Conditions: 150 mM KOAc, 10 mM MgCl2 and 150 mM bicine (pH 8.5), 24 C. Chemical mapping of a 177-nucleotide RNA with DMS and 2A3.

RNA sequence: GGGAACGACUCGAGUAGAGUCGAAAAAGUGAUGUGACUGUCAUUUAUGGACCAUUUUUGGCGCACACAGUGCGCAUCUUCAACACGAGAACUCAUCUGGAUGCAGCGAUAUAUGUUGAAAAUGAUACGUAAUACAUUGCUUCGGCAAUGUAUUACGAAAAGAAACAACAACAACAAC
Reactivity to DMS in 0.01 (KOAc 150mM, MgCl2 10mM, bicine 150mM(pH8.5), 24C), signal-to-noise 3, nucleotides 027 to 126: a040g010u000g000a030u000g000u010g010a130c140u010g010u010c040a050u000u000u000a080u020g020g010a190c010c020a080u020u000u000u020u010g020g020c060g020c020a020c080a150c170a090g010u000g000c000g000c010a010u000c030u000u000c020a040a040c070a060c170g000a110g000a100a050c040u000c040a030u000c060u010g010g010a090u010g000c060a040g010c060g000a120u000a080u000a040u000g010u000u000g010a010a020a060a150u000g010a090u010a130
Reactivity to 2A3 in 0.01 (KOAc 150mM, MgCl2 10mM, bicine 150mM(pH8.5), 24C), signal-to-noise 2, nucleotides 027 to 126: a000g070u030g010a010u030g020u060g110a080c070u100g020u070c040a020u050u060u180a140u110g030g070a050c010c010a080u110u000u010u100u220g110g050c060g020c000a010c030a010c080a070g000u020g010c010g000c010a030u000c040u060u010c030a060a040c040a000c110g030a030g050a140a010c000u020c040a070u040c060u090g120g000a060u090g010c050a010g020c000g030a000u010a000u000a010u210g010u010u030g130a080a060a030a050u190g000a060u070a110
For DMS the reverse transcriptase was MarathonRT. The 2A3 profile rests on 1,823 reads. For DMS, 2,430 sequencing reads were counted. Reactivities are rounded to 0.1 and cut off at 0 and 3. The data come from the RNA Mapping Database (RMDB), library OK2TST.